[RMDB]
RNA sequence: GGGAACGACUCGAGUAGAGUCGAAAAGAUAUGGAGAUUAAUAGCUAGCUCGUCGGAAACGACCAGAGCUUGGACCUAUGAUCUCCUAAGUCAAAGAAGUCCGACUCGUUCGCGAGUCGGACUUCAACACAAUAAGUAGCUUCGGCUACUUAUUGUGAAAAGAAACAACAACAACAAC
Reactivity to DMS in 0.01 (KOAc 150mM, MgCl2 10mM, bicine 150mM(pH8.5), 24C), signal-to-noise 2, nucleotides 027 to 126: g000a020u000a300u000g000g000a030g010a040u000u000a040a010u000a030g010c010u000a020g010c000u000c000g000u010c000g000g000a080a090a150c000g000a020c030c240a160g020a000g000c000u000u000g050g000a090c250c020u000a000u000g000a010u000c010u000c000c000u000a010a050g010u000c020a070a090a130g000a050a010g010u000c000c010g010a010c000u000c000g020u010u020c260g010c020g020a010g000u000c000g010g030a000c000u000u000c000a050a150
Reactivity to 2A3 in 0.01 (KOAc 150mM, MgCl2 10mM, bicine 150mM(pH8.5), 24C), signal-to-noise 1, nucleotides 027 to 126: g010a000u080a010u090g070g010a030g020a030u070u090a270a070u300a030g040c030u010a000g020c010u000c020g020u010c000g040g000a090a020a070c030g000a010c060c080a100g000a020g000c000u020u130g020g000a060c020c000u000a000u030g000a010u030c000u020c000c000u000a040a000g020u020c010a070a030a300g030a010a000g000u000c000c000g080a010c020u000c050g160u180u140c300g040c000g210a020g000u040c000g000g000a000c000u000u010c000a000a020

This 177-nucleotide RNA was probed chemically with DMS and 2A3.
The DMS profile rests on 2,313 reads.
The RNA was probed in 150 mM KOAc, 10 mM MgCl2 and 150 mM bicine (pH 8.5) at 24 C.
It was measured as part of the RMDB library TTRDEL.
Values cover nucleotides 27 to 126.